Structure probing data (DMS and 2A3) for a 177-nucleotide construct. It was measured as part of the RMDB library OK1LIB. For 2A3 the reverse transcriptase was SuperScript II with manganese. Reactivities are rounded to 0.1 and cut off at 0 and 3. The reactions ran in a buffer of 150 mM KOAc, 10 mM MgCl2 and 150 mM bicine (pH 8.5), at 24 C.
RNA sequence: GGGAACGACUCGAGUAGAGUCGAAAAAUUGGAAAUUGUCUGAUUCAAUAUCUUAGUGUCAUUAUGCUUUUCGCUAACUAGAUAUCUUCCAAGACCGCUGUCUAUGAUUAUCACAUCACAGACUCCACAUAGUGGAUCAGUUCGCUGAUCCACUAUGAAAAGAAACAACAACAACAAC
Reactivity to DMS in 0.01 (KOAc 150mM, MgCl2 10mM, bicine 150mM(pH8.5), 24C), signal-to-noise 5, nucleotides 027 to 126: a090u010u000g000g000a020a050a090u000u010g010u010c070u010g000a090u020u030c130a100a050u020a020u010c030u020u020a020g010u000g010u030c140a100u030u020a030u030g020c060u000u010u030u020c130g010c020u000a040a040c110u030a010g000a040u010a030u010c080u010u000c010c000a030a050g000a160c040c090g010c150u000g020u000c010u000a070u020g000a010u000u000a080u020c220a080c220a040u000c030a000c030a020g000a010c010u010c110c060a160
Reactivity to 2A3 in 0.01 (KOAc 150mM, MgCl2 10mM, bicine 150mM(pH8.5), 24C), signal-to-noise 9, nucleotides 027 to 126: a000u060u030g020g070a020a050a060u160u120g080u080c100u100g080a140u180u090c080a060a050u030a060u130c050u090u140a030g010u040g100u100c060a130u050u260a120u280g060c060u110u110u100u130c040g000c040u020a040a050c010u010a020g000a020u020a030u020c070u020u000c010c000a020a030g070a060c020c050g060c150u070g000u000c010u010a050u020g020a040u020u090a160u300c100a060c030a080u010c000a000c010a010g010a020c020u020c030c020a050